[RMDB]
RNA sequence: GGGAACGACUCGAGUAGAGUCGAAAACAUGAUCCAGCAUGGACAUAACUUGCUUGUGUAUGUCGCGAGUUACAAUGAAGUCGAUCAGUUGGCACAACUUCUCACAGAGAGACAUUACAAAGUGACGAAUGGACUAUCCAUUCGUGGAUAGUCCAUUAAAAGAAACAACAACAACAAC
Reactivity to DMS in 0.01 (KOAc 150mM, MgCl2 10mM, bicine 150mM(pH8.5), 24C), signal-to-noise 9, nucleotides 027 to 126: c100a080u020g000a080u010c020c040a120g020c110a080u020g020g020a060c080a110u010a050a070c090u000u020g020c070u000u010g010u020g000u020a040u010g000u000c070g010c060g010a130g010u000u000a040c130a080a140u020g000a070a070g000u010c060g000a100u010c040a080g010u020u010g000g010c140a060c090a070a070c090u010u010c020u010c070a070c120a090g000a130g010a110g000a020c060a030u030u020a070c060a020a060a120g000u010g000a060c120g010
Reactivity to 2A3 in 0.01 (KOAc 150mM, MgCl2 10mM, bicine 150mM(pH8.5), 24C), signal-to-noise 9, nucleotides 027 to 126: c040a050u110g040a100u060c020c000a010g060c050a170u170g050g030a030c010a050u090a040a050c030u050u080g020c010u120u070g060u020g030u110a050u050g090u050c020g000c020g050a030g030u050u080a060c060a090a080u180g050a070a040g050u050c040g060a080u040c040a030g070u090u060g080g000c080a020c020a180a090c040u060u010c030u020c030a100c080a030g070a000g010a000g010a060c010a050u030u090a060c050a060a130a030g040u050g080a020c020g100
The data come from the RNA Mapping Database (RMDB), library OK1LIB. Structure probing data (DMS and 2A3) for a 177-nucleotide construct. High 2A3 reactivity points to a flexible backbone, as in loops and unpaired stretches. The reactions ran in a buffer of 150 mM KOAc, 10 mM MgCl2 and 150 mM bicine (pH 8.5), at 24 C.